[RMDB]
RNA sequence: GGGAACGACUCGAGUAGAGUCGAAAAGAUAUGGAUAAGAGGCUCCAACAGCGACCUGCUCGGAAACGAGCAAGUCGACAUGGAGCUCUUAUCCUAAGUCAAACCCGAACCUGUUCGCAGGUUCGGGCUUUCUUCCAUAGUUCGCUAUGGAAGAAAGAAAAGAAACAACAACAACAAC
Reactivity to 2A3 in 0.01 (KOAc 150mM, MgCl2 10mM, bicine 150mM(pH8.5), 24C), signal-to-noise 4, nucleotides 027 to 126: g010a000u030a010u050g010g000a000u030a010a000g060a080g270g280c020u010c040c070a300a280c180a230g030c010g000a000c000c000u000g030c010u000c000g000g000a020a010a010c000g000a000g000c000a000a000g000u000c010g030a020c040a240u300g000g010a000g000c000u000c000u000u000a010u020c000c000u000a000a000g010u000c010a060a050a130c030c020c000g000a000a000c000c000u040g060u160u170c300g030c210a000g000g000u000u010c010g000g000g000
Reactivity to DMS in 0.01 (KOAc 150mM, MgCl2 10mM, bicine 150mM(pH8.5), 24C), signal-to-noise 4, nucleotides 027 to 126: g010a010u000a060u010g000g000a020u010a020a010g000a050g020g030c000u010c000c000a120a110c260a210g010c000g000a010c010c020u000g020c000u000c000g020g010a020a020a030c010g000a020g010c000a000a010g000u000c000g010a010c160a220u010g010g010a020g000c000u000c000u000u000a000u000c000c000u000a010a050g000u000c010a090a120a300c000c000c000g000a010a010c000c000u000g010u010u010c260g020c020a000g000g000u000u000c000g010g010g020
Chemical mapping of a 177-nucleotide RNA with 2A3 and DMS.
For DMS, 5,925 sequencing reads were counted.